[RMDB]
RNA sequence: GGGAACGACUCGAGUAGAGUCGAAAAGGAUCGCCCGAAAAUUCACGGGCGCGUCGGACUAAAUUCAUGCGUUUUGCUGACUUAGAAGCCCCAGUUGACGGUCAUUCCACCGCUUACCAGUCAGCUGCUGAAACCAGGUUUUCGAACCUGGUUUCAGAAAAGAAACAACAACAACAAC
Reactivity to 2A3 in 0.01 (KOAc 150mM, MgCl2 10mM, bicine 150mM(pH8.5), 24C), signal-to-noise 3, nucleotides 027 to 126: g090g000a040u010c000g000c000c000c060g100a020a060a050a100u290u200c130a050c050g000g000g000c000g000c030g020u020c020g080g020a110c020u030a000a000a170u090u030c010a030u300g090c060g120u030u150u200u300g000c020u020g010a020c000u000u050a020g000a080a020g070c030c000c000c000a000g020u020u010g020a030c010g000g070u020c070a020u160u000c020c040a130c000c080g000c010u020u030a030c010c010a000g030u060c050a000g020c020u030g030
Reactivity to DMS in 0.01 (KOAc 150mM, MgCl2 10mM, bicine 150mM(pH8.5), 24C), signal-to-noise 2, nucleotides 027 to 126: g000g000a040u000c020g000c000c000c000g000a080a060a160a270u000u080c160a150c000g020g040g010c020g040c210g060u040c020g000g050a210c030u000a060a100a130u010u000c030a010u060g040c000g040u030u000u030u070g050c070u000g000a120c300u000u000a020g000a160a150g000c020c000c040c000a000g010u000u000g000a010c010g000g030u010c140a060u010u050c050c020a040c050c090g020c060u060u000a010c000c000a150g020u000c050a000g000c000u010g000